[RMDB]
RNA sequence: GGGAACGACUCGAGUAGAGUCGAAAAGAGUAAAUAGAGGAGUCAGGGUUCGCACCCGCUCCGCGAACCUAGGGUAACACUGACUAUUGAGCGGAAGAGAGAGCAGACGAAGAUACGUCUGCAUAGAACGUGCCAUACGGUUCGCCGUAUGGCACGUAAAAGAAACAACAACAACAAC
Reactivity to 2A3 in 0.01 (KOAc 150mM, MgCl2 10mM, bicine 150mM(pH8.5), 24C), signal-to-noise 2, nucleotides 027 to 126: g050a010g050u220a010a170a060u170a000g190a070g180g130a020g000u000c000a030g150g000g000u050u000c000g000c050a070c060c000c000g030c000u000c000c000g010c000g000a000a000c030c030u040a050g010g020g010u080a020a000c020a000c050u000g030a020c020u040a040u300u120g010a000g070c050g000g000a010a000g040a000g070a000g070a070g000c000a000g000a000c020g010a160a000g130a160u140a130c000g000u000c000u000g010c010a000u000a010g010a000
Reactivity to DMS in 0.01 (KOAc 150mM, MgCl2 10mM, bicine 150mM(pH8.5), 24C), signal-to-noise 2, nucleotides 027 to 126: g010a210g030u040a090a100a040u030a210g000a190g030g000a020g010u000c000a130g030g000g010u000u000c040g000c070a080c040c000c000g020c000u000c050c260g000c010g010a000a040c010c010u010a160g070g000g000u000a050a070c100a190c100u000g020a100c130u000a030u040u010g040a020g000c000g000g000a300a050g010a040g010a080g000a060g020c000a000g040a040c070g000a300a110g000a150u080a040c000g000u000c000u000g000c000a080u010a020g050a060
The record gives the reactivity of an RNA of 177 nucleotides to 2A3 and DMS. The reactions ran in a buffer of 150 mM KOAc, 10 mM MgCl2 and 150 mM bicine (pH 8.5), at 24 C. For DMS, 1,252 sequencing reads were counted. Values are in units of 0.01, from 0 to 300, in steps of 10.